[RMDB]
RNA sequence: GGGAACGACUCGAGUAGAGUCGAAAAGUUAAACACGAAAGCAAGAAUAACGCUGAGUUAGCACAGUUCUGAGCAUCAUUGGGUGACAUCUUUGUCAAUGACGCCUUUGGCACCGCCCACCGCCGUCGCGCAAUAUGAAGUUCGCUUCAUAUUGCGCAAAAGAAACAACAACAACAAC
Reactivity to DMS in 0.01 (KOAc 150mM, MgCl2 10mM, bicine 150mM(pH8.5), 24C), signal-to-noise 2, nucleotides 027 to 126: g000u000u000a040a090a090c100a090c110g010a120a090a120g020c040a110a040g000a100a080u000a050a090c170g000c030u000g010a140g000u000u000a030g020c050a060c110a070g000u000u000c010u010g010a080g000c020a040u010c050a060u000u000g000g000g020u000g030a090c070a060u010c090u010u000u010g000u010c070a070a030u030g000a060c080g000c040c030u000u000u000g000g020c060a060c050c040g010c030c000c000a140c140c070g000c020c020g010u020c170
Reactivity to 2A3 in 0.01 (KOAc 150mM, MgCl2 10mM, bicine 150mM(pH8.5), 24C), signal-to-noise 2, nucleotides 027 to 126: g010u010u070a090a130a000c070a010c130g020a100a030a040g000c040a020a030g040a140a130u150a150a010c060g000c040u050g090a030g130u070u140a020g050c030a050c000a040g000u060u000c010u060g030a020g060c030a030u030c000a040u030u120g050g000g040u050g020a000c000a090u050c060u160u090u060g050u060c020a020a050u020g030a040c010g010c020c000u090u050u050g020g000c010a000c080c000g010c010c000c010a010c000c040g000c010c030g120u120c090
This 177-nucleotide RNA was probed chemically with DMS and 2A3. Source: RMDB library OK2TST, as collected in RNAgym. Conditions: 150 mM KOAc, 10 mM MgCl2 and 150 mM bicine (pH 8.5), 24 C. High 2A3 reactivity points to a flexible backbone, as in loops and unpaired stretches.